[RMDB]
RNA sequence: GGGAACGACUCGAGUAGAGUCGAAAAUCUGAUCGCACGAUGUGUUCAACAUUCGAUUUGUUUCCUUCGCCUCCGCCUUCGAUUUUUGGAGCUCGGAACAAAUGUCUUUCAUGAACUCUAAGAUAUCUCUCCUAAGCUGUUUCGACAGCUUAGGAGAAAAAGAAACAACAACAACAAC
Reactivity to 2A3 in 0.01 (KOAc 150mM, MgCl2 10mM, bicine 150mM(pH8.5), 24C), signal-to-noise 5, nucleotides 027 to 126: u020c040u040g060a030u060c030g010c110a070c110g030a050u090g050u030g040u130u090c040a040a070c030a050u030u130c030g120a060u020u030u030g050u030u130u020c010c000u050u100c120g080c030c020u000c010c020g070c030c050u150u190c070g170a250u050u130u040u080u250g020g020a000g000c040u050c060g020g000a040a020c010a030a060a010u090g010u000c040u010u070u060c100a130u130g020a020a010c000u000c010u030a060a010g020a080u080a150u070c100
Reactivity to DMS in 0.01 (KOAc 150mM, MgCl2 10mM, bicine 150mM(pH8.5), 24C), signal-to-noise 2, nucleotides 027 to 126: u000c040u000g000a020u040c030g050c300a100c070g040a050u030g000u000g000u030u020c030a100a230c090a050u000u000c070g000a070u000u000u000g010u030u040u000c010c000u050u040c080g000c020c000u000c000c070g020c300c070u000u000c110g010a100u010u000u000u010u030g060g030a010g000c010u000c140g000g000a090a040c190a090a170a040u000g020u030c050u060u000u010c030a050u070g000a040a040c040u000c060u000a010a060g000a010u010a010u000c140
Chemical mapping of a 177-nucleotide RNA with 2A3 and DMS.
For DMS, 1,949 sequencing reads were counted.
Reactivities are given for positions 27 through 126.
DMS adducts were read by reverse transcription with MarathonRT.
The reactions ran in a buffer of 150 mM KOAc, 10 mM MgCl2 and 150 mM bicine (pH 8.5), at 24 C.
It was measured as part of the RMDB library OK1LIB.